About this RNA: This 177-nucleotide RNA was probed chemically with DMS and 2A3.

RNA sequence: GGGAACGACUCGAGUAGAGUCGAAAAGAAGAAGAGCUGGGUAAAUGUCAUUACCCAAAUGAGGAUGGGGUUAAAAUUUGUUUUGGGGGGAUAUCAGAAGUUCUUCUGGCAGCCAUUUUGAUCCAAAGAUAUCAGCUAAUUUCGAUUAGCUGAUAUCAAAAGAAACAACAACAACAAC
Reactivity to DMS in 0.01 (KOAc 150mM, MgCl2 10mM, bicine 150mM(pH8.5), 24C), signal-to-noise 5, nucleotides 027 to 126: g010a130a060g010a060a040g010a070g030c080u010g010g000g010u010a030a060a120u010g010u020c200a110u010u000a050c010c000c000a030a060a070u010g010a100g000g000a080u000g010g000g000g000u000u000a050a060a080a110u010u020u010g010u000u000u010u010g010g010g000g010g000g000a060u010a030u010c080a070g010a100a050g000u000u000c040u000u000c040u000g000g020c110a070g000c040c040a080u000u000u010u000g000a130u000c050c050a070a080a120
Reactivity to 2A3 in 0.01 (KOAc 150mM, MgCl2 10mM, bicine 150mM(pH8.5), 24C), signal-to-noise 2, nucleotides 027 to 126: g050a040a000g020a020a030g000a000g000c050u060g080g000g000u060a080a100a010u190g060u100c040a070u000u110a050c000c000c000a020a030a030u050g010a010g060g010a040u070g010g010g020g000u010u010a060a100a040a090u190u220u170g070u020u120u050u040g020g010g020g000g040g000a020u040a010u100c020a020g060a150a000g020u040u020c010u050u020c000u010g020g000c000a010g000c000c010a010u100u080u020u090g030a020u020c030c000a030a000a000